[RMDB]
RNA sequence: GGGAACGACUCGAGUAGAGUCGAAAACAUCGAUCAUGAUCGACAUGCACGUACGAGAGGUACACUAGUGUGAUCCGCAUGCUAGCUCUCUGCUAGUCUACGCUGAUCCUAGACAUGGUACUCAGACGGAUUCUAAAGAAUUCGUUCUUUAGAAUCCAAAAGAAACAACAACAACAAC
Reactivity to 2A3 in 0.01 (KOAc 150mM, MgCl2 10mM, bicine 150mM(pH8.5), 24C), signal-to-noise 9, nucleotides 027 to 126: c020a060u070c030g040a040u050c030a090u170g130a100u060c030g070a070c030a050u130g050c100a020c120g050u140a040c050g050a040g010a050g300g060u040a020c040a020c040u020a020g050u050g090u110g200a020u010c010c020g000c020a010u050g000c000u000a000g000c010u020c020u030c060u100g000c000u010a010g050u040c040u050a050c120g000c020u010g000a010u000c000c010u020a020g020a050c040a060u080g060g000u040a040c030u030c040a010g040a080c080
Reactivity to DMS in 0.01 (KOAc 150mM, MgCl2 10mM, bicine 150mM(pH8.5), 24C), signal-to-noise 9, nucleotides 027 to 126: c100a140u010c050g010a050u000c080a100u010g010a100u000c040g000a090c090a070u000g010c120a080c130g010u000a040c080g000a130g010a090g020g010u000a040c040a250c030u010a040g010u000g020u010g000a080u000c120c060g020c010a050u000g000c010u000a010g000c010u000c290u010c230u010g010c000u000a010g000u010c060u000a030c090g000c070u000g000a070u000c010c030u000a020g000a110c100a070u000g010g010u000a070c080u000c050a100g010a240c210